RNA sequence: GGGAACGACUCGAGUAGAGUCGAAAAUUGUGGAGCCAGAAAUACUGAUCGACGGCGAUUACAGCUUGCAACGGUCGGCGGAUGUGUCGCAGCGGGUGUUGCAGGCCUGUGUGGCGCAGCUGUGGCGAUCCCAAAGUGGAUUCGUCCACUUUGGGAUAAAAGAAACAACAACAACAAC
Reactivity to 2A3 in 0.01 (KOAc 150mM, MgCl2 10mM, bicine 150mM(pH8.5), 24C), signal-to-noise 4, nucleotides 027 to 126: u120u100g050u090g110g050a010g020c010c010a030g140a030a140a040u230a090c050u050g030a070u050c010g070a080c050g010g020c020g030a040u070u170a090c070a020g010c010u080u130g020c060a060a070c020g100g240u030c010g020g000c020g050g000a090u100g070u030g040u190c010g000c040a060g180c050g030g050g100u060g050u050u140g020c060a040g000g130c000c020u050g020u000g000u030g020g000c020g000c040a030g020c020u040g010u030g110g000c000g000
Reactivity to DMS in 0.01 (KOAc 150mM, MgCl2 10mM, bicine 150mM(pH8.5), 24C), signal-to-noise 5, nucleotides 027 to 126: u000u010g020u010g010g010a150g000c030c030a070g000a120a090a080u000a100c070u010g000a050u000c040g000a150c090g010g010c020g010a100u010u010a090c120a100g010c020u000u000g030c040a040a060c020g010g000u000c010g010g020c020g000g000a100u010g010u000g010u000c010g010c010a060g010c020g000g010g010u000g010u010u010g010c090a060g010g000c050c030u000g020u000g020u000g000g000c030g010c030a060g010c040u000g020u000g000g000c040g000